[RMDB]
RNA sequence: GGGAACGACUCGAGUAGAGUCGAAAAAUUGAGAUUUGCCACAUCCCGUGGGGCCAUAGACAACGCCUAUUACCGGUUGCAUGGUGAAAUUCAAAGAUUUACAUGAGCCAUCCGGAAGCAGGAAAGGAUGUAUGUGCUUCUUCGGAAGCACAUACAUAAAAGAAACAACAACAACAAC
Reactivity to DMS in 0.01 (KOAc 150mM, MgCl2 10mM, bicine 150mM(pH8.5), 24C), signal-to-noise 2, nucleotides 027 to 126: a120u010u000g010a150g000a130u010u000u010g030c010c010a060c080a120u010c010c010c030g000u000g010g010g010g010c050c110a080u000a100g010a110c150a080a030c100g000c000c010u000a080u020u010a100c020c080g010g000u020u000g010c070a040u010g000g000u000g030a020a010a050u000u010c160a040a060a110g000a020u000u000u000a090c040a030u000g030a190g010c130c050a040u020c020c020g030g000a030a050g040c090a010g000g000a050a080a100g020g010
Reactivity to 2A3 in 0.01 (KOAc 150mM, MgCl2 10mM, bicine 150mM(pH8.5), 24C), signal-to-noise 2, nucleotides 027 to 126: a000u140u140g060a050g040a050u090u080u160g070c020c000a010c010a030u000c000c010c000g030u030g050g010g070g010c000c020a080u070a070g100a020c040a080a030c160g010c000c000u040a090u080u160a140c000c030g040g000u010u050g000c030a030u050g100g030u120g050a020a020a050u170u110c130a080a040a050g060a090u080u110u080a060c030a050u070g030a020g030c070c020a020u000c040c010g010g070a010a050g050c050a000g000g170a060a080a000g180g060